[RMDB]
RNA sequence: GGGAACGACUCGAGUAGAGUCGAAAAGAGGAGGAUAGUGAUCGAAUCAGAUCGGCGGAUGCUAUCCCGGAUGUGGCACAUUCGUUAGCUUAUUAAGUAAAUCAUUAAGGUGACUUAGUGGACAAAGUUGACACCGUGAAUUCGUUCACGGUGUCAAAAAAGAAACAACAACAACAAC
Reactivity to DMS in 0.01 (KOAc 150mM, MgCl2 10mM, bicine 150mM(pH8.5), 24C), signal-to-noise 3, nucleotides 027 to 126: g010a100g020g030a130g000g000a100u010a010g010u000g020a030u000c040g020a100a200u020c210a120g030a040u030c040g020g020c040g000g020a120u000g000c050u000a020u000c000c020c000g000g000a030u000g010u000g030g010c080a220c040a020u000u000c020g000u060u020a040g000c000u000u000a070u000u010a070a050g020u030a050a120a070u030c020a040u020u000a020a040g000g000u050g000a060c010u000u000a020g030u000g000g000a070c120a060a040a110g030
Reactivity to 2A3 in 0.01 (KOAc 150mM, MgCl2 10mM, bicine 150mM(pH8.5), 24C), signal-to-noise 1, nucleotides 027 to 126: g060a000g140g000a000g040g000a030u000a060g090u100g010a010u000c030g000a050a110u100c070a030g050a030u000c020g020g040c010g100g070a060u070g000c090u060a010u000c000c000c000g000g000a020u030g000u020g070g040c010a000c000a100u010u010c100g030u030u040a010g090c110u050u060a030u150u010a260a080g040u010a040a140a160u060c010a000u080u020a020a000g100g000u120g020a050c010u010u000a030g000u010g020g000a010c030a000a240a000g030